Chemical mapping of a 177-nucleotide RNA with DMS and 2A3.
In probing experiments dimethyl sulfate is read out at A N1 and C N3, which are open when not base-paired.
It was measured as part of the RMDB library TTRDEL.
DMS adducts were read by reverse transcription with MarathonRT.
For DMS, 8,038 sequencing reads were counted.

RNA sequence: GGGAACGACUCGAGUAGAGUCGAAAAGAUAUGGAUCCCUAGCGAUAAGCAGUGGUCGGAAACGACCAUACUGCUUUUGACGCUGGGAUCCUAAGUCAAAACCACCUCUUCUUCGGAAGAGGUGGAAGUAACUGUAAUCGUUCGCGAUUACAGUUACAAAAGAAACAACAACAACAAC
Reactivity to DMS in 0.01 (KOAc 150mM, MgCl2 10mM, bicine 150mM(pH8.5), 24C), signal-to-noise 5, nucleotides 027 to 126: g010a030u000a280u000g000g010a020u000c000c010c010u010a020g020c000g030a140u000a020a010g010c000a020g020u000g000g010u000c000g000g000a070a060a120c010g010a010c000c000a040u010a030c080u010g010c000u000u000u000u000g010a190c060g010c000u000g010g000g000a000u000c000c000u000a010a070g000u000c020a110a050a130a240c000c000a010c000c000u000c000u000u000c000u000u010c250g030g010a020a000g000a020g000g010u000g000g000a000a040
Reactivity to 2A3 in 0.01 (KOAc 150mM, MgCl2 10mM, bicine 150mM(pH8.5), 24C), signal-to-noise 1, nucleotides 027 to 126: g010a010u030a020u100g010g000a000u020c010c010c020u030a010g000c010g050a140u040a280a040g010c000a010g010u000g010g000u010c000g020g010a050a040a040c010g000a010c010c010a010u050a010c010u020g010c000u040u020u030u140g050a010c000g000c000u000g000g010g000a000u000c000c000u000a020a010g020u000c020a010a010a070a150c000c000a000c000c000u000c000u000u000c000u020u060c280g190g010a010a000g000a000g010g000u000g000g000a000a000